[RMDB]
RNA sequence: GGGAACGACUCGAGUAGAGUCGAAAACUGCUUGGCGAUGGCCUUGUUCUGGUCCAGUGCAAGCUGCGCAACCCAGUGACGCACGCUACCUUCCAGCGCAUCGAGGCGGUCAUCGUGUGCGAUGCUGUGGGCGUAGGCCAUUCGUGGCCUACGCCCAAAAAGAAACAACAACAACAAC
Reactivity to 2A3 in 0.01 (KOAc 150mM, MgCl2 10mM, bicine 150mM(pH8.5), 24C), signal-to-noise 1, nucleotides 027 to 126: c070u020g030c000u030u000g090g040c000g280a230u180g000g000c000c000u020u080g220u220u060c100u210g040g040u000c000c010a070g000u060g150c000a010a060g050c000u200g000c100g000c030a190a030c080c000c000a050g000u110g030a040c040g000c000a020c000g020c010u070a150c000c000u100u110c020c020a000g010c000g020c040a120u130c010g020a000g020g020c000g130g000u070c030a040u030c020g130u000g020u120g170c020g000a030u100g000c020u000g000
The record gives the reactivity of an RNA of 177 nucleotides to 2A3. Values cover nucleotides 27 to 126. For 2A3 the reverse transcriptase was SuperScript II with manganese. The reactions ran in a buffer of 150 mM KOAc, 10 mM MgCl2 and 150 mM bicine (pH 8.5), at 24 C. Source: RMDB library OK1LIB, as collected in RNAgym.